Description: Structure probing data (DMS and 2A3) for a 177-nucleotide construct. Reactivities are given for positions 27 through 126. For 2A3 the reverse transcriptase was SuperScript II with manganese. The RNA was probed in 150 mM KOAc, 10 mM MgCl2 and 150 mM bicine (pH 8.5) at 24 C. The DMS profile rests on 7,085 reads.
RNA sequence: GGGAACGACUCGAGUAGAGUCGAAAAUGAAGGCCUAGAGCCCUCCACGGCAUCGGCGGAUAAGUUCGCUGGUAUGACGCAGAUGAUUGCGUGGCUUGGUGUUUUUGUCCACAUUGCUUCCGUGGUGCCUCAUGAAUGGAUUCGUCCAUUCAUGAGGAAAAGAAACAACAACAACAAC
Reactivity to DMS in 0.01 (KOAc 150mM, MgCl2 10mM, bicine 150mM(pH8.5), 24C), signal-to-noise 3, nucleotides 027 to 126: u020g010a140a090g010g020c000c030u010a130g030a180g010c000c010c020u000c000c010a000c020g010g010c060a010u000c010g010g010c020g000g000a030u000a080a090g020u000u010c010g020c000u010g010g020u000a050u000g010a030c000g020c010a020g010a190u010g000a160u000u000g000c010g010u000g000g000c040u000u000g020g030u010g020u000u000u000u000u000g000u010c120c010a030c080a100u010u010g000c060u000u000c020c030g010u000g010g000u000g010
Reactivity to 2A3 in 0.01 (KOAc 150mM, MgCl2 10mM, bicine 150mM(pH8.5), 24C), signal-to-noise 4, nucleotides 027 to 126: u120g020a050a040g040g010c070c070u180a100g030a040g040c040c000c000u000c000c010a020c000g000g020c010a020u030c040g050g000c140g000g000a050u100a180a070g180u040u040c020g010c030u060g060g040u150a060u120g030a010c010g000c010a000g090a300u250g040a110u220u190g040c000g000u000g030g000c010u050u140g060g010u060g060u020u070u040u160u180g110u050c040c000a020c010a070u010u180g010c010u070u000c010c010g010u000g000g020u000g070